The data come from the RNA Mapping Database (RMDB), library OK1LIB. This 177-nucleotide RNA was probed chemically with DMS and 2A3. Reactivities are given for positions 27 through 126. For DMS, 3,802 sequencing reads were counted. For 2A3, 2,979 sequencing reads were counted. For DMS the reverse transcriptase was MarathonRT.
[RMDB]
RNA sequence: GGGAACGACUCGAGUAGAGUCGAAAAGCGUGGUCGUACGCGACCACGCAAGAUGGUAAGAGAGAUUACCAUCUGAUAAGUGAUUUGGAUAAGAUCUCUCAAAGCUGCGGCAUACGUGCCGCAGCAACACUAGUGCCCUAUUCGUAGGGCACUAGUGAAAAGAAACAACAACAACAAC
Reactivity to DMS in 0.01 (KOAc 150mM, MgCl2 10mM, bicine 150mM(pH8.5), 24C), signal-to-noise 2, nucleotides 027 to 126: g060c010g130u000g000g040u020c070g060u030a070c190g020c000g050a030c000c000a010c000g000c020a010a010g000a040u020g000g040u000a050a100g020a010g000a060g010a050u000u000a000c000c020a020u000c010u020g000a180u050a090a090g020u010g020a060u030u040u030g000g000a130u000a050a130g020a010u030c020u020c000u030c010a080a100a050g060c000u000g000c000g000g000c010a040u020a080c230g010u000g040c040c000g000c030a010g050c020a000a040
Reactivity to 2A3 in 0.01 (KOAc 150mM, MgCl2 10mM, bicine 150mM(pH8.5), 24C), signal-to-noise 4, nucleotides 027 to 126: g000c010g010u010g010g010u010c030g010u060a020c240g010c010g150a000c000c000a010c000g010c000a000a000g000a010u010g000g020u030a110a030g030a000g020a010g000a010u020u020a000c000c000a000u000c000u020g060a140u060a240a090g080u060g230a100u170u170u220g180g030a090u150a160a070g020a080u020c010u000c000u000c030a120a030a010g000c000u000g000c000g010g000c010a010u020a020c230g100u050g000c010c000g020c000a010g020c000a000a000